Chemical mapping of a 207-nucleotide RNA with 2A3. Reactivities are given for positions 27 through 156. 2A3 adducts were read by reverse transcription with SuperScript II with manganese. It was measured as part of the RMDB library OK3TST. The 2A3 profile rests on 562 reads.

RNA sequence: GGGAACGACUCGAGUAGAGUCGAAAACUGGUUUUUUACCCUAGAAGAUUAAUGCUACAUACAAUUCUCUUGGCAUACUUCGGCAGUAAUGCAUUUAGUCCUUUGAAACCUCAUAAAUUCCAUUUCCUUGACAUAGGACUUAAAAGAGGUGUCAUGCGUACCAUGACAGCUUCGGCUGUCAUGGUACAAAAGAAACAACAACAACAAC
Reactivity to 2A3 in 0.01 (KOAc 150mM, MgCl2 10mM, bicine 150mM(pH8.5), 24C), signal-to-noise 1, nucleotides 027 to 156: c020u020g030g060u010u000u000u080u120u040a100c040c010c000u020a100g020a070a000g040a060u110u110a090a040u060g030c020u040a050c010a100u140a110c170a170a110u130u000c080u080c050u160u020g000g030c000a000u000a040c000u030u000c010g090g060c030a020g020u160a120a080u080g040c010a000u000u030u120a020g000u010c000c010u040u050u000g090a080a060a030c010c000u010c030a030u110a200a090a170u170u080c010c000a000u040u030u130c000c000u020u030g000a010c000a110u040a030g010g000a000c000u100u120a000a050a140a000g020a000g010g030u000g000u060c030a010u020g040c060